[RMDB]
Description: The record gives the reactivity of an RNA of 177 nucleotides to 2A3 and DMS. Source: RMDB library M2PK90, as collected in RNAgym. 2A3 adducts were read by reverse transcription with SuperScript II with manganese. For DMS the reverse transcriptase was MarathonRT. The RNA was probed in 150 mM KOAc, 10 mM MgCl2 and 150 mM bicine (pH 8.5) at 24 C. The DMS profile rests on 4,589 reads.
RNA sequence: GGGAACGACUCGAGUAGAGUCGAAAAGUAGUGCUCGAGAGGGAGGCUGUCUCGCAGAGCUUUUAGAUCUUCUGAUCUUUCCCUCCUCCAAAUCGCUUAUGCGUCAAGCGAUAGACGCAUAAUUAAAUUAAGCCACUUAAUUCGUUAAGUGGCUUAAAAAAGAAACAACAACAACAAC
Reactivity to 2A3 in 0.01 (KOAc 150mM, MgCl2 10mM, bicine 150mM(pH8.5), 24C), signal-to-noise 1, nucleotides 027 to 126: g050u070a040g090u030g100c040u060c120g010a010g040a030g010g070g070a050g110g100c090u130g170u100c010u010c040g000c030a010g100a000g070c000u030u030u010u020a000g010a010u010c000u190u070c190u300g000a000u010c000u000u010u000c020c010c000u020c000c000u000c000c000a050a040a110u190c080g000c150u000u040a010u050g000c000g000u010c000a100a030g160c110g240a150u050a060g000a010c000g000c010a000u010a020a030u110u120a010a010a020
Reactivity to DMS in 0.01 (KOAc 150mM, MgCl2 10mM, bicine 150mM(pH8.5), 24C), signal-to-noise 4, nucleotides 027 to 126: g020u000a070g010u020g010c040u000c040g010a050g020a230g000g010g020a050g010g010c100u010g020u000c010u000c030g020c130a030g010a240g010c020u000u000u000u000a010g010a010u000c010u010u010c270u020g000a020u000c000u000u000u000c000c000c000u000c020c010u000c020c030a080a120a090u010c070g030c260u000u000a000u000g000c010g000u000c010a070a110g030c200g000a110u000a040g000a010c000g000c000a010u000a010a010u000u000a020a050a100